[RMDB]
RNA sequence: GGGAACGACUCGAGUAGAGUCGAAAAUGCCAUACUGACUGGUAAAAAUAGCGAUAGCGGCUACUGUCAUUGCGGAUGCGAAGGCUUUGUUGUAUCCACGGUAGCAACAACAUUGCCAUCAACAGCAAAAUGAUGAGCCAUUCGUGGCUCAUCAUUUAAAAGAAACAACAACAACAAC
Reactivity to 2A3 in 0.01 (KOAc 150mM, MgCl2 10mM, bicine 150mM(pH8.5), 24C), signal-to-noise 1, nucleotides 027 to 126: u080g020c040c000a150u140a140c060u040g170a090c010u100g000g060u050a120a130a060a010a010u070a000g060c070g190a110u050a060g000c060g050g020c000u020a030c000u060g050u110c060a070u030u230g000c090g070g070a020u020g000c040g030a150a090g000g010c000u060u050u020g000u000u000g020u030a040u040c010c010a000c030g080g030u040a010g030c060a000a020c000a010a000c000a000u000u070g000c010c010a030u020c020a000a120c030a010g060c040a010
Reactivity to DMS in 0.01 (KOAc 150mM, MgCl2 10mM, bicine 150mM(pH8.5), 24C), signal-to-noise 1, nucleotides 027 to 126: u000g020c000c020a070u010a190c160u000g000a090c140u010g030g020u000a030a030a030a060a040u010a100g000c110g020a140u020a110g000c100g000g010c040u000a030c060u000g000u010c150a090u010u000g010c100g020g000a080u000g000c040g020a080a050g000g000c040u010u010u000g010u000u010g010u000a110u000c050c000a100c150g030g020u000a030g000c070a010a040c020a040a020c080a070u020u000g010c000c000a160u000c090a070a070c090a060g010c090a110

Notes
The record gives the reactivity of an RNA of 177 nucleotides to 2A3 and DMS. 2A3 is a SHAPE reagent: it acylates the 2'-hydroxyl of flexible nucleotides of all four kinds. Values are in units of 0.01, from 0 to 300, in steps of 10. The DMS profile rests on 918 reads. For DMS the reverse transcriptase was MarathonRT. The RNA was probed in 150 mM KOAc, 10 mM MgCl2 and 150 mM bicine (pH 8.5) at 24 C.